[RMDB]
RNA sequence: GGGAACGACUCGAGUAGAGUCGAAAAUUUGACAUUUACCUUGUACAUAUCUAUAAUAAGGAGAUGGAUGACUUUGAUGAAGGGUGUAUUAAAGUGCUAGAAGAAACAGCUGAGAGGCAUGCAGCAUGGGAGAUAAGUCUCAAACGGAACUUAGAGCUAUCCCACUCAAUUUCGAUUGAGUGGGAUAAAAAGAAACAACAACAACAAC
Reactivity to DMS in 0.01 (KOAc 150mM, MgCl2 10mM, bicine 150mM(pH8.5), 24C), signal-to-noise 2, nucleotides 027 to 156: u000u000u010g010a150c060a060u000u010u000a060c030c020u020u020g020u010a090c040a130u010a100u000c020u010a150u000a130a140u000a130a120g020g020a090g010a050u010g010g010a070u020g000a060c010u000u000u010g020a090u000g000a060a070g050g010g050u000g020u010a070u000u000a040a060a100g050u010g000c030u000a050g030a060a060g020a150a040a060c040a050g040c010u010g010a060g040a100g030g000c060a070u000g040c060a100g000c090a120u000g010g010g010a120g000a150u000a080a050g010u000c040u020c020a060a060a300c090g030g030a020a020c020u000u010a100g010a110g020c060
Reactivity to 2A3 in 0.01 (KOAc 150mM, MgCl2 10mM, bicine 150mM(pH8.5), 24C), signal-to-noise 3, nucleotides 027 to 156: u140u060u130g050a030c030a020u090u100u140a130c000c020u030u030g090u150a090c020a120u280a080u140c140u120a170u050a190a160u130a110a080g030g000a050g020a020u050g010g000a040u040g010a010c020u140u030u030g010a030u060g030a030a060g020g000g000u030g010u020a030u050u170a040a080a050g010u050g030c020u050a030g010a090a010g020a060a070a010c020a070g010c020u070g000a010g010a020g120g010c010a010u050g010c000a010g010c020a020u040g000g010g000a090g000a020u040a040a050g010u050c020u000c030a090a110a020c040g000g010a030a030c020u080u080a070g010a010g050c030